RNA sequence: GGGAACGACUCGAGUAGAGUCGAAAAAAGUCGUUGUGAACAAGGCUGUGUCCUCGGCGCAAGCCCGUAUCGCGGCACGUAAGGCACGAGAGUUGGUGCGGCGUAAGAGCGCCACCGACAUCGGUGGGCCGGAGACUAACUUCGGUUAGUCUCCGGCAAAAGAAACAACAACAACAAC
Reactivity to DMS in 0.01 (KOAc 150mM, MgCl2 10mM, bicine 150mM(pH8.5), 24C), signal-to-noise 1, nucleotides 027 to 126: a060a030g000u000c120g010u000u010g080u000g010a050a100c180a000a090g000g000c030u000g010u000g030u050c080c080u030c160g040g050c000g010c010a090a100g060c020c000c000g000u000a120u000c060g050c010g000g000c160a040c010g000u010a030a030g000g020c040a160c030g000a210g150a040g030u090u010g000g020u000g010c030g010g020c020g000u000a180a100g030a110g000c030g070c000c000a060c020c090g080a060c260a190u030c000g000g040u000g050g000
Reactivity to 2A3 in 0.01 (KOAc 150mM, MgCl2 10mM, bicine 150mM(pH8.5), 24C), signal-to-noise 2, nucleotides 027 to 126: a000a000g010u010c040g000u010u070g050u000g000a070a000c020a000a270g030g000c000u000g000u000g010u050c010c030u000c070g070g050c040g000c080a100a080g080c000c010c040g010u000a040u110c020g000c010g000g000c010a010c120g060u120a070a140g150g030c010a000c060g170a070g000a040g090u020u040g000g000u110g010c020g120g000c030g070u040a140a000g080a010g200c010g120c030c000a070c000c000g200a120c040a010u120c060g020g010u130g000g070